[RMDB]
Structure probing data (DMS) for a 177-nucleotide construct. The reactions ran in a buffer of 150 mM KOAc, 10 mM MgCl2 and 150 mM bicine (pH 8.5), at 24 C. The DMS profile rests on 698 reads.

RNA sequence: GGGAACGACUCGAGUAGAGUCGAAAACGCUUUGUGUUGCCUGUAGGAUCGUCGCACCAAGUGUUCGGCGCCGCCAAGGCUUGGAAGUACAGCACGUUCGUUUCGGCCUACGGCUUCAAUUCGAACGAUCACCCGGAGGUUUCGACCUCCGGGUGAUAAAAGAAACAACAACAACAAC
Reactivity to DMS in 0.01 (KOAc 150mM, MgCl2 10mM, bicine 150mM(pH8.5), 24C), signal-to-noise 1, nucleotides 027 to 126: c050g050c120u000u000u000g030u010g010u020u010g030c000c010u030g040u000a160g020g000a090u000c010g000u000c060g020c120a070c000c030a050a100g050u010g010u000u000c030g000g000c050g040c090c060g010c070c070a050a080g000g020c030u020u000g040g040a100a090g020u010a070c050a100g000c180a230c050g000u000u010c050g000u000u000u010c110g000g000c030c010u080a050c100g010g020c010u010u010c140a080a140u000u000c030g000a100a060c060g010